[RMDB]
This 207-nucleotide RNA was probed chemically with 2A3.
RNA sequence: GGGAACGACUCGAGUAGAGUCGAAAAUCAGUGCUUCGGCACUGAAAAAAUCCUAAGUCGGUAGAGGACUGCGGAGCAUCGAUCUAAUCGGAAACGAUUAGGGAGCUCCCAGUCUACCCACCUACCGAUAUGGAAAAAAUGCCCGUUCGCGGGCAAAGAUUACAGUAACCUUCGGGUUACUGUAAUCAAAAGAAACAACAACAACAAC
Reactivity to 2A3 in 0.01 (KOAc 150mM, MgCl2 10mM, bicine 150mM(pH8.5), 24C), signal-to-noise 2, nucleotides 027 to 156: u040c000a000g010u000g000c000u100u110c120g150g000c000a000c000u000g000a000a000a010a000a000a020u040c030c000u070a160a040g050u000c020g010g000u000a000g010a030g030g000a000c010u020g020c300g020g000a000g000c000a180u300c020g080a020u000c010u000a010a000u000c000g050g030a090a060a110c030g000a010u000u000a010g000g020g000a010g000c000u000c010c010c000a000g000u000c000u000a020c020c000c010a020c000c000u000a000c000c000g000a000u000a020u060g000g000a030a090a020a090a000a080u250g000c160c010c000g000u050u060c240g000c030g060g020g040c040a040a010a040

Source: RMDB library RNAMAK, as collected in RNAgym. The reactions ran in a buffer of 150 mM KOAc, 10 mM MgCl2 and 150 mM bicine (pH 8.5), at 24 C.